[RMDB]
RNA sequence: GGGAACGACUCGAGUAGAGUCGAAAAGCUGCCGUUUCGCUGGAAGCGGCGGCAAGAGAAGCCAGCCGCCACGGCGUUGAAGCCGUCAUCCUUUCCGAUUCGGUGGAGGGUGAGGCGCGGGAAGUGAACCCAUGCGGAGGUUCGCCUCCGCAUGGGUAAAAGAAACAACAACAACAAC
Reactivity to DMS in 0.01 (KOAc 150mM, MgCl2 10mM, bicine 150mM(pH8.5), 24C), signal-to-noise 1, nucleotides 027 to 126: g010c010u010g010c010c010g050u000u000u010c000g000c190u010g030g000a060a050g030c010g000g000c030g000g030c000a040a040g010a190g030a250a120g020c000c000a120g020c000c010g010c050c030a200c020g020g030c030g010u000u000g010a140a170g010c010c000g000u000c000a000u000c000c000u000u000u010c000c000g010a300u000u000c120g000g040u000g020g030a010g000g020g020u030g000a160g010g000c090g020c040g020g000g030a090a190g010u000g010a160

This 177-nucleotide RNA was probed chemically with DMS.
Reactivities are rounded to 0.1 and cut off at 0 and 3.